The record gives the reactivity of an RNA of 177 nucleotides to DMS. In probing experiments dimethyl sulfate is read out at A N1 and C N3, which are open when not base-paired. Reactivities are given for positions 27 through 126. Conditions: 150 mM KOAc, 10 mM MgCl2 and 150 mM bicine (pH 8.5), 24 C.
[RMDB]
RNA sequence: GGGAACGACUCGAGUAGAGUCGAAAAGAUAUGGAUCGUUUGGAAUGUCCACUUAUCGGAAACGAUAAGGGACGAGAGAAACAUCCUAAGUCAAACUGAACGUACGAGUUCGCUCGUACGUUCAGAAGCACAAAAAGUCGUUCGCGACUUUUUGUGCAAAAGAAACAACAACAACAAC
Reactivity to DMS in 0.01 (KOAc 150mM, MgCl2 10mM, bicine 150mM(pH8.5), 24C), signal-to-noise 1, nucleotides 027 to 126: g010a020u010a200u000g000g000a010u010c180g000u000u000u020g000g000a120a160u000g010u010c000c000a130c010u000u000a000u000c000g010g000a070a020a090c020g000a000u010a000a010g000g000g010a000c020g000a140g010a300g000a040a010a020c020a070u000c000c000u000a000a160g010u000c010a080a110a200c030u000g000a030a000c020g000u000a000c000g000a010g000u000u010c200g020c000u010c000g010u000a000c000g010u000u000c000a000g030a070a070